Conditions: 150 mM KOAc, 10 mM MgCl2 and 150 mM bicine (pH 8.5), 24 C. This 207-nucleotide RNA was probed chemically with 2A3.
[RMDB]
RNA sequence: GGGAACGACUCGAGUAGAGUCGAAAAAACACAAUCUUCACAGUCGACAAGCAAGACAACAUCAAGCCACUCGCAAUCGACAACCACCACGAACUCGAACUCGGCACCCAGUACACGCACGUAGUCUCACCACUCGACGACCAAGCAACAGUCACUGGUAAUGAUCCUCGUUCGCGAGGAUCAUUACAAAAGAAACAACAACAACAAC
Reactivity to 2A3 in 0.01 (KOAc 150mM, MgCl2 10mM, bicine 150mM(pH8.5), 24C), signal-to-noise 1, nucleotides 027 to 156: a030a000c180a100c080a110a070u160c100u150u150c080a000c060a240g070u030c010g000a080c030a020a210g060c040a030a000g060a090c000a030a050c020a060u200c110a110a000g050c010c000a040c000u030c030g010c030a080a020u050c020g010a000c040a010a110c020c000a000c010c010a050c040g070a070a070c000u000c050g020a070a030c060u000c020g010g010c050a040c010c000c020a040g060u060a030c100a000c070g150c040a020c130g030u030a060g020u030c020u010c000a000c000c030a010c000u060c080g000a050c060g030a070c060c010a000a010g140c000a000a020c010a120g080u080c060a000c090u070g050
For 2A3, 476 sequencing reads were counted.